[RMDB]
RNA sequence: GGGAACGACUCGAGUAGAGUCGAAAAGCGGGCUACAAUGGCUCUGACAGUGGGAUGCAACGCCGAGAGGCGACGCUAAUCUCCAAACGGAGUCGUAGUUCGGAUUGCGGGCUGAAACCCGCCCGCACUAAAGUACAAUAUUCGUAUUGUACUUUAGAAAAGAAACAACAACAACAAC
Reactivity to DMS in 0.01 (KOAc 150mM, MgCl2 10mM, bicine 150mM(pH8.5), 24C), signal-to-noise 9, nucleotides 027 to 126: g010c010g000g000g010c000u000a020c010a180a110u050g010g000c000u000c000u010g010a080c150a100g020u030g010g000g010a020u000g000c010a080a300c010g010c000c000g010a240g000a240g000g010c000g000a020c300g000c010u010a090a040u000c000u000c000c010a070a140a120c030g000g000a010g020u000c010g000u000a010g000u000u000c000g000g000a100u010u000g000c000g000g000g010c020u000g010a060a080a150c020c010c030g010c000c000c000g010c010a110
Reactivity to 2A3 in 0.01 (KOAc 150mM, MgCl2 10mM, bicine 150mM(pH8.5), 24C), signal-to-noise 9, nucleotides 027 to 126: g050c000g000g000g000c000u000a000c040a110a270u300g010g000c000u020c000u010g040a040c030a060g050u300g090g000g000a000u020g000c000a030a030c010g000c000c000g050a060g010a030g060g000c010g010a010c050g000c000u040a050a030u000c010u000c010c000a040a080a060c020g000g000a000g000u000c010g000u010a000g000u010u000c000g000g010a020u040u060g000c000g000g000g000c020u090g080a100a070a110c010c010c000g000c000c000c000g000c000a000